[RMDB]
RNA sequence: GGGAACGACUCGAGUAGAGUCGAAAACGACAGCGUAAUCGCCAUUUGAAGUGAUCGAGUGUUCAUUCAAAGAACGUUUACUCUAUGCUCUUUCAAAGAGCAUACGCUGUUCUAUUGAAAGAGAUACGAUCUUGUUGUAUUUCGAUAUGACAAGAUCAAAAGAAACAACAACAACAAC
Reactivity to 2A3 in 0.01 (KOAc 150mM, MgCl2 10mM, bicine 150mM(pH8.5), 24C), signal-to-noise 9, nucleotides 027 to 126: c050g030a010c020a000g010c010g010u020a080a070u130c070g010c010c020a100u010u000u020g020a020a020g030u010g020a020u030c060g040a030g050u190g040u030u010c020a040u120u070c060a060a040a070g010a010a010c010g010u040u080u090a020c010u000c000u010a030u110g120c000u000c000u000u080u010c010a010a010a000g010a000g000c000a000u010a010c020g000c010u000g000u000u000c010u040a130u010u070g080a030a040a010g060a000g010a010u040a120c070
Reactivity to DMS in 0.01 (KOAc 150mM, MgCl2 10mM, bicine 150mM(pH8.5), 24C), signal-to-noise 9, nucleotides 027 to 126: c110g000a050c030a010g010c020g010u000a020a030u020c070g020c020c070a240u000u000u000g010a030a030g010u000g010a010u000c160g020a080g020u020g010u010u010c010a080u010u020c200a060a080a080g000a080a110c010g010u020u020u050a050c030u000c030u010a050u010g000c010u000c000u010u010u020c040a020a020a010g000a190g010c000a040u010a000c090g000c030u000g010u000u010c060u010a090u020u010g000a050a080a050g010a060g010a060u020a070c190

Notes: An RNA of 177 nucleotides, treated with 2A3 and DMS and read out base by base. As a SHAPE reagent, 2A3 marks flexible, mostly unpaired nucleotides at the ribose 2'-OH. The DMS profile rests on 41,899 reads.